[RMDB]
Chemical mapping of a 177-nucleotide RNA with DMS and 2A3. In probing experiments dimethyl sulfate is read out at A N1 and C N3, which are open when not base-paired. The RNA was probed in 150 mM KOAc, 10 mM MgCl2 and 150 mM bicine (pH 8.5) at 24 C. For 2A3, 3,990 sequencing reads were counted.

RNA sequence: GGGAACGACUCGAGUAGAGUCGAAAAGCAAAACGGGUAAGUCCUAUACGGCCAGCUCCCUUCGAAUCCUCCAGGGCUUGAUCGCAGCAAAGGUAGUUGGUUGUAGCGGCGCGAUAUAGUAAGCUUAAUCCAGUGUUUACUUCGGUAAACACUGGAUAAAAGAAACAACAACAACAAC
Reactivity to DMS in 0.01 (KOAc 150mM, MgCl2 10mM, bicine 150mM(pH8.5), 24C), signal-to-noise 3, nucleotides 027 to 126: g000c080a040a040a090a100c090g000g000g010u010a030a060g010u020c030c000u000a170u010a020c040g000g000c010c020a040g000c010u000c060c000c000u000u000c080g000a060a180u010c030c020u000c060c050a140g010g000g000c040u000u000g000a060u010c140g020c080a090g010c120a100a070a010g010g010u010a020g010u010u010g000g000u010u010g000u010a030g010c090g000g000c040g010c020g000a090u030a100u050a090g010u020a050a150g000c040u000u010a110
Reactivity to 2A3 in 0.01 (KOAc 150mM, MgCl2 10mM, bicine 150mM(pH8.5), 24C), signal-to-noise 3, nucleotides 027 to 126: g080c050a010a060a060a080c070g100g000g040u060a030a020g110u030c000c000u010a020u010a050c000g000g010c010c000a000g010c000u050c000c010c000u010u040c030g060a060a070u070c000c010u080c050c020a110g060g000g000c010u060u110g060a080u160c080g040c050a030g020c060a070a000a000g010g010u010a030g020u020u000g000g000u020u030g020u020a000g000c050g000g010c010g000c000g010a010u050a000u010a200g080u090a100a040g030c000u000u040a030